Structure probing data (2A3) for a 207-nucleotide construct. High 2A3 reactivity points to a flexible backbone, as in loops and unpaired stretches.
[RMDB]
RNA sequence: GGGAACGACUCGAGUAGAGUCGAAAACGCGUCAAUGACAAUAGAUUCGUCAUCACGGAUGAGCGCGGUAGAAAUGUUAACGUUGUCCGGCGUCACGAAUACCAGGAAAUACUCCUUCCGUAUGGCGGUAGCUCAAAAUAUAUCUUCCAUCGAAUCGGAAUCAGGGUCUAUUCGUAGACCCUGAUUCAAAAGAAACAACAACAACAAC
Reactivity to 2A3 in 0.01 (KOAc 150mM, MgCl2 10mM, bicine 150mM(pH8.5), 24C), signal-to-noise 2, nucleotides 027 to 156: c050g000c020g020u040c090a110a060u130g040a080c030a080a040u080a170g120a120u160u040c020g010u000c000a020u010c000a000c010g070g000a030u040g020a000g000c130g000c040g000g060u040a020g080a070a180a010u150g000u040u090a060a080c100g010u040u100g090u070c110c130g050g000c000g060u040c030a000c040g050a130a050u000a020c030c010a040g040g130a000a040a090u060a060c010u070c040c000u080u000c000c040g000u000a020u000g010g000c020g040g040u030a040g020c000u040c110a070a020a040a000u220a020u010a040u020c020u100u010c050c050a050u100c090g030a140a090u050c140g040